Structure probing data (2A3) for a 207-nucleotide construct.
It was measured as part of the RMDB library OK3TST.
Conditions: 150 mM KOAc, 10 mM MgCl2 and 150 mM bicine (pH 8.5), 24 C.
Values cover nucleotides 27 to 156.
[RMDB]
RNA sequence: GGGAACGACUCGAGUAGAGUCGAAAAGGAAAUAGGUGGAAUGUUAAGCCUCAGGAAGAGCGUGAAGAGGAGGUUCUGGUUUGAAGUUUGAGAAGGGGGCUGACGGAUUUGCACCUGGAAAACGACUUGAAAGACAAUUGGGAUGUUUGUAAAUCCGCGAAGACAAUGGGUUCGCCCAUUGUCUUCGAAAAGAAACAACAACAACAAC
Reactivity to 2A3 in 0.01 (KOAc 150mM, MgCl2 10mM, bicine 150mM(pH8.5), 24C), signal-to-noise 2, nucleotides 027 to 156: g040g010a040a080a040u150a100g000g000u000g020g020a050a030u050g030u140u070a120a000g000c040c000u010c020a010g070g080a070a100g050a020g020c050g000u050g030a060a030g000a010g040g040a020g000g030u110u030c040u100g090g000u000u050u120g090a120a030g000u110u110u100g090a070g020a030a060g040g000g010g040g010c040u030g000a020c000g010g040a010u000u020u100g000c040a050c020c000u010g010g000a050a110a000a020c020g040a010c040u050u060g020a070a060a000g070a070c090a090a280u130u050g000g010g010a000u050g110u160u290u020g040u070a080a070a030u000c010c020g000